[RMDB]
RNA sequence: GGGAACGACUCGAGUAGAGUCGAAAAGUAUUACCGGGGCAGGUACUAACCCCCGCUGAUGGGUGGAAGCAUGUCCGCCUUUCGAAGCGAUCCGCGCAAGGGUACGACAACGGUUUUCCGUACUUCUACAUGACUCUAGGCGGGGUUGCGGCUAUGGAGUUACAAUUUAAUUCGUUAAAUUGUAACUAAAAGAAACAACAACAACAAC
Reactivity to DMS in 0.01 (KOAc 150mM, MgCl2 10mM, bicine 150mM(pH8.5), 24C), signal-to-noise 4, nucleotides 027 to 156: g010u010a080u010u000a110c030c020g010g030g040g050c050a090g020g000u010a080c060u020a130a130c060c010c000c000c000g040c030u010g020a130u000g010g010g030u000g010g000a140a080g020c050a140u000g020u000c020c040g020c020c020u020u000u010c050g010a130a110g030c030g000a100u010c060c080g000c060g020c060a110a090g010g010g010u000a060c060g010a090c040a120a100c040g010g020u000u000u000u000c040c030g030u000a060c030u010u000c010u000a090c080a130u020g010a070c030u010c030u010a300g010g010c000g010g010g030g010u000u000g010c030g010g030c040u000a120u010g000g010
Reactivity to 2A3 in 0.01 (KOAc 150mM, MgCl2 10mM, bicine 150mM(pH8.5), 24C), signal-to-noise 2, nucleotides 027 to 156: g030u030a060u170u130a100c010c030g010g000g040g040c050a050g070g000u070a100c020u040a030a080c000c010c000c010c000g010c030u060g010a070u220g010g000g020u050g000g020a040a020g030c120a100u180g040u020c010c010g020c000c000u030u050u060c060g040a070a010g010c020g050a100u100c110c090g010c010g030c060a020a020g030g010g000u060a070c050g010a010c040a120a020c040g030g050u070u100u220u160c020c010g020u040a040c030u010u060c000u050a090c020a180u260g090a020c010u010c040u050a020g000g030c000g010g030g020g020u020u030g010c010g010g000c030u090a120u190g050g010

The record gives the reactivity of an RNA of 207 nucleotides to DMS and 2A3. For DMS, 10,635 sequencing reads were counted. For DMS the reverse transcriptase was MarathonRT.